An RNA of 177 nucleotides, treated with DMS and 2A3 and read out base by base. It was measured as part of the RMDB library OK2TRN. The reactions ran in a buffer of 150 mM KOAc, 10 mM MgCl2 and 150 mM bicine (pH 8.5), at 24 C.

RNA sequence: GGGAACGACUCGAGUAGAGUCGAAAAAGCCGCGGCCAUCGGGCACCAGCGGUACGGUCACGCGGUGGGCGCCGGCCAUCGCCACCACCGGCGAGUAGGAGUCGUAGAACGGCUCGAUCAGCAACACCCAGUGUAAGUGGUUCGCCACUUACACUGGAAAAGAAACAACAACAACAAC
Reactivity to DMS in 0.01 (KOAc 150mM, MgCl2 10mM, bicine 150mM(pH8.5), 24C), signal-to-noise 1, nucleotides 027 to 126: a160g020c000c000g030c010g010g020c010c020a060u020c020g050g000g000c260a070c030c050a090g020c100g010g000u000a060c170g030g000u000c030a050c130g010c020g010g030u000g000g020g020c020g010c040c020g070g000c020c060a050u000c040g000c000c030a110c090c150a130c120c060g000g000c010g000a080g010u030a140g000g000a020g010u010c000g000u010a110g000a130a300c010g000g000c000u000c010g000a080u000c070a070g010c100a110a050c100a100c120
Reactivity to 2A3 in 0.01 (KOAc 150mM, MgCl2 10mM, bicine 150mM(pH8.5), 24C), signal-to-noise 1, nucleotides 027 to 126: a000g000c020c000g000c000g050g110c060c000a050u040c060g000g090g090c140a060c060c020a060g100c060g100g010u100a050c090g040g000u040c020a020c130g120c000g060g020u020g000g000g040c040g020c080c100g030g000c010c000a110u070c010g000c010c000a040c000c040a050c020c030g010g030c010g000a020g010u010a060g080g080a010g000u010c030g000u130a050g040a300a090c010g000g000c010u020c030g020a140u050c020a070g020c010a010a010c020a040c060